[RMDB]
RNA sequence: GGGAACGACUCGAGUAGAGUCGAAAAGCCGCAGCGAUGGCUGCGCCAUCUGGUUCCACCAGGAGCUACACGGCGAAGACCGCUUCAUCGACUACUACGAGGCACACAACGAAGACCUGCGGCACUAACGAUCUUAGCUGUUCGCAGCUAAGAUCGUAAAAGAAACAACAACAACAAC
Reactivity to DMS in 0.01 (KOAc 150mM, MgCl2 10mM, bicine 150mM(pH8.5), 24C), signal-to-noise 2, nucleotides 027 to 126: g000c040c040g020c020a020g000c090g000a160u020g000g000c000u000g000c020g020c020c010a100u050c250u010g000g010u010u000c000c020a180c200c240a210g000g060a020g020c000u000a070c200a120c130g000g000c010g010a040a010g000a170c010c080g010c040u000u000c060a070u000c000g030a110c020u000a070c060u040a040c090g000a070g000g020c040a070c100a100c080a040a110c200g000a070a040g020a270c220c000u000g000c010g000g010c050a060c100u000a090
Reactivity to 2A3 in 0.01 (KOAc 150mM, MgCl2 10mM, bicine 150mM(pH8.5), 24C), signal-to-noise 2, nucleotides 027 to 126: g010c010c000g000c000a000g030c040g200a240u140g010g020c030u050g030c050g020c000c000a030u010c030u040g000g000u040u000c020c000a060c070c070a130g000g000a020g000c020u070a050c060a030c110g020g030c020g010a060a010g050a110c030c050g040c110u050u030c030a080u060c020g110a060c060u100a050c020u060a100c200g020a060g050g040c030a010c020a010c010a070a100c080g080a040a020g030a120c000c030u000g000c030g000g000c000a020c020u040a040